[RMDB]
RNA sequence: GGGAACGACUCGAGUAGAGUCGAAAAGAUAUGGAUGAACUCCGAUAAGUUUGACAUCGGAAACGAUGUAAACUUUUGACGGAGAAUCCUAAGUCAAAAGUGAAGACGACUUCGGUCGUCUUCACAACAUGCAGACUGGGUUCGCCCAGUCUGCAUGAAAAGAAACAACAACAACAAC
Reactivity to DMS in 0.01 (KOAc 150mM, MgCl2 10mM, bicine 150mM(pH8.5), 24C), signal-to-noise 1, nucleotides 027 to 126: g010a020u010a300u020g000g000a030u000g020a300a120c020u000c000c000g050a250u000a000a050g020u000u010u010g010a040c030a000u000c020g000g000a100a090a110c030g000a000u000g020u000a020a020a000c000u000u000u040u000g010a160c110g010g010a020g010a080a010u000c000c000u000a050a120g000u000c020a050a110a070a090g030u000g020a040a050g000a030c000g000a000c020u000u010c200g050g010u000c000g000u010c000u010u040c000a000c000a050a110